[RMDB]
RNA sequence: GGGAACGACUCGAGUAGAGUCGAAAAGAUAUGGAGACUAUGUAGUGUAAACCAUAGGGAGAAGUCUGCUCGGAAACGAGCAGUCUUCGAAGAACUAUGGGAAGAAGCUACAUAGUCUCCUAAGUCAGAUAUAAAACAGGUUCGCCUGUUUUAUAUCAAAAGAAACAACAACAACAAC
Reactivity to DMS in 0.01 (KOAc 150mM, MgCl2 10mM, bicine 150mM(pH8.5), 24C), signal-to-noise 4, nucleotides 027 to 126: g020a070u000a300u000g000g010a000g010a020c000u000a010u000g000u000a000g000u000g000u010a040a140a300c000c000a000u000a000g000g000g020a100g010a010a020g010u000c000u000g010c000u000c000g000g010a040a060a110c010g000a010g000c000a000g000u000c000u000u000c000g030a050a180g010a100a150c000u000a010u000g010g020g000a010a120g010a230a300g000c000u000a000c000a000u000a000g010u000c000u010c000c000u010a000a080g000u000c050a150

Chemical mapping of a 177-nucleotide RNA with DMS.